Chemical mapping of a 177-nucleotide RNA with DMS and 2A3. For DMS the reverse transcriptase was MarathonRT. Reactivities are given for positions 27 through 126. The data come from the RNA Mapping Database (RMDB), library OK2TST.
[RMDB]
RNA sequence: GGGAACGACUCGAGUAGAGUCGAAAACACUAUAUGUCCUGAAACAGAAGCAAUGCAUAGCGAGUGAGUUCGAGGGAAGGACGAGUUAUUAGACAUCAAAUUCCAAAAGAACAACAACAACGACACCUAUGUUUGGUAUGUUCGCAUACCAAACAUAAAAAGAAACAACAACAACAAC
Reactivity to DMS in 0.01 (KOAc 150mM, MgCl2 10mM, bicine 150mM(pH8.5), 24C), signal-to-noise 3, nucleotides 027 to 126: c130a080c080u020a100u000a130u010g010u000c040c010u030g010a110a050a110c130a090g010a090a080g030c060a040a050u010g020c050a060u000a090g000c090g010a100g030u030g010a130g030u000u000c030g030a140g020g020g000a050a050g010g020a160c130g000a090g030u030u000a100u020u010a080g040a030c070a080u000c050a030a120a140u000u000c010c010a050a040a060a230g000a020a080c060a040a060c060a080a070c040a010a020c020g040a090c150a040c150c150
Reactivity to 2A3 in 0.01 (KOAc 150mM, MgCl2 10mM, bicine 150mM(pH8.5), 24C), signal-to-noise 3, nucleotides 027 to 126: c030a010c040u050a030u010a040u300g060u000c000c020u040g050a100a050a010c000a040g040a080a020g030c030a040a000u110g030c020a040u050a040g030c020g080a020g060u070g020a090g040u010u020c020g030a050g020g070g030a010a040g010g030a030c060g000a010g020u000u010a130u070u130a070g090a050c030a060u030c050a040a080a110u070u000c000c000a110a060a020a070g100a020a000c000a000a010c000a010a000c000a010a010c010g250a000c000a010c060c010